An RNA of 177 nucleotides, treated with DMS and 2A3 and read out base by base. Values cover nucleotides 27 to 126. It was measured as part of the RMDB library M2PK90.

RNA sequence: GGGAACGACUCGAGUAGAGUCGAAAAUUAAACAUGGUUACCAUAUUCUAAGGCACAAGGUAGCCAUGAGUGCCUUAGAAAAUAUAAAACCUGAGCGUUAGGAAAAACCUAAUGCUCAGCAAAAAAAUACUGGUAUUAAGUUCGCUUAAUACCAGUAAAAAGAAACAACAACAACAAC
Reactivity to DMS in 0.01 (KOAc 150mM, MgCl2 10mM, bicine 150mM(pH8.5), 24C), signal-to-noise 2, nucleotides 027 to 126: u000u010a060a060a150c080a040u000g010g040u000u010a100c060c030a140u040a080u000u000c020u010a040a020g020g000c000a010c020a060a110g040g020u000a080g060c100c120a020u010g000a260g030u000g000c000c010u000u000a000g000a010a030a060a070u070a080u000a050a050a130a120c260c000u000g000a010g010c000g000u000u010a000g010g000a070a130a110a220a140c000c000u000a000a000u000g010c000u010c000a010g010c020a020a000a030a110a020a030a050
Reactivity to 2A3 in 0.01 (KOAc 150mM, MgCl2 10mM, bicine 150mM(pH8.5), 24C), signal-to-noise 2, nucleotides 027 to 126: u090u040a090a020a030c050a060u060g090g000u100u120a040c000c000a010u010a140u150u030c010u020a040a040g010g030c010a020c010a040a170g210g020u080a050g140c010c010a020u020g000a020g020u000g010c000c000u010u010a030g030a030a030a010a010u130a020u010a000a080a000a010c000c000u000g000a000g010c000g000u000u000a000g000g020a120a090a040a110a080c000c000u000a000a000u010g000c000u020c000a000g020c000a030a030a110a040a030a000a030